[RMDB]
RNA sequence: GGGAACGACUCGAGUAGAGUCGAAAAGGCCACACAGUCGAAAUGCAGGUUGCAAAACCAGAAGUAACAAAUCCUUAUGAACAUGUCCUUGUUCGACUUGGAAGAGCUCAUCUUGGUACGAGGGUCCGCCGCCCACACUUUUCGAAGUGUGGGCGGCAAAAGAAACAACAACAACAAC
Reactivity to 2A3 in 0.01 (KOAc 150mM, MgCl2 10mM, bicine 150mM(pH8.5), 24C), signal-to-noise 1, nucleotides 027 to 126: g060g020c050c000a020c080a000c020a000g000u020c000g060a040a100a040u140g090c000a050g040g040u020u070g000c000a000a000a210a130c000c000a000g120a300a000g030u110a060a060c080a140a000a170u080c010c010u070u080a060u210g050a000a000c000a120u110g000u050c120c000u290u000g290u060u000c000g000a000c060u000u030g000g300a150a260g000a060g080c000u000c020a170u020c050u030u300g100g030u000a000c000g000a090g060g000g000u000c020c020